RNA sequence: GGGAACGACUCGAGUAGAGUCGAAAAGAUUAAGUGGGAGCGUCGCCCUCUCGGUGCAUCGGAUAUUAAUUAGCCAGUGCGUGGCAUUACGCAUAUUGAUGUCUACUUUGGCGUAGACUGUGCCAAUUUAAGGAUUGGUGGGCAAUCCAGCCCUAGACACCGGCAUAGUAUUCGUACUAUGCCGGUGAAAAGAAACAACAACAACAAC
Reactivity to DMS in 0.01 (KOAc 150mM, MgCl2 10mM, bicine 150mM(pH8.5), 24C), signal-to-noise 2, nucleotides 027 to 156: g010a100u000u000a080a070g000u000g030g000g000a100g030c040g020u000c080g040c050c030c010u000c020u000c050g030g050u010g030c040a100u030c040g020g020a060u000a050u000u000a090a120u000u000a070g010c010c020a030g010u000g000c000g020u000g010g050c130a090u000u000a080c080g020c060a090u000a110u000u010g000a090u000g030u000c020u000a040c020u000u010u010g030g030c080g030u000a020g010a000c020u000g000u010g020c000c000a050a070u000u000u020a090a100g020g010a120u000u000g020g030u020g010g020g040c020a080a120u000c080c040a120g000c000c030c040u000a090g010a300
Reactivity to 2A3 in 0.01 (KOAc 150mM, MgCl2 10mM, bicine 150mM(pH8.5), 24C), signal-to-noise 3, nucleotides 027 to 156: g050a040u200u170a120a010g040u070g010g050g000a030g010c020g020u030c030g070c000c040c030u030c000u000c010g060g020u100g000c010a030u060c050g000g030a010u030a060u100u150a140a110u070u140a040g000c010c000a040g000u000g020c000g010u010g120g030c140a080u080u200a010c020g000c020a000u020a130u050u190g050a080u150g010u000c000u000a000c020u130u090u180g080g000c080g000u000a010g020a030c040u030g040u030g020c000c010a010a010u050u050u130a140a070g100g010a030u020u010g000g010u050g010g040g000c010a040a000u070c040c030a010g010c000c000c000u050a060g000a010